[RMDB]
RNA sequence: GGGAACGACUCGAGUAGAGUCGAAAAGUAAUAAUUGUGCGCAGCAUGCUGGGAAGUCAGAAGUAUGAUUACCCCUGCCCCACGAUGGGGGUGGCUUUUGUACAGCUGGUCCUGGGACAGUGGAGUGCUAUGUCCAAGUGUUCGCACUUGGACAUAGAAAAGAAACAACAACAACAAC
Reactivity to 2A3 in 0.01 (KOAc 150mM, MgCl2 10mM, bicine 150mM(pH8.5), 24C), signal-to-noise 2, nucleotides 027 to 126: g030u030a040a160u080a120a100u190u110g030u060g030c020g000c010a000g010c010a030u110g050c010u010g000g000g070a070a030g070u080c000a000g020a160a020g080u110a040u150g070a100u050u150a060c000c020c000c000u020g010c030c050c000c020a070c110g090a110u160g050g000g000g010g000u010g030g000c000u020u090u070u150g020u030a020c020a030g050c040u030g000g120u030c010c030u000g000g000g000a010c030a030g010u060g080g000a120g000u040g030
Reactivity to DMS in 0.01 (KOAc 150mM, MgCl2 10mM, bicine 150mM(pH8.5), 24C), signal-to-noise 3, nucleotides 027 to 126: g020u000a090a100u010a070a090u010u000g000u000g000c040g000c060a040g020c030a050u000g020c030u010g000g020g020a060a080g000u000c030a060g020a080a080g010u000a030u000g010a070u010u010a120c030c030c030c020u000g020c040c010c020c050a120c190g000a090u010g000g020g000g000g040u000g020g010c050u000u010u000u000g030u020a080c140a050g000c010u000g000g000u000c030c020u000g020g010g010a060c080a060g010u000g010g000a120g020u000g010
This 177-nucleotide RNA was probed chemically with 2A3 and DMS. For DMS, 3,274 sequencing reads were counted. For 2A3 the reverse transcriptase was SuperScript II with manganese. Conditions: 150 mM KOAc, 10 mM MgCl2 and 150 mM bicine (pH 8.5), 24 C. For DMS the reverse transcriptase was MarathonRT.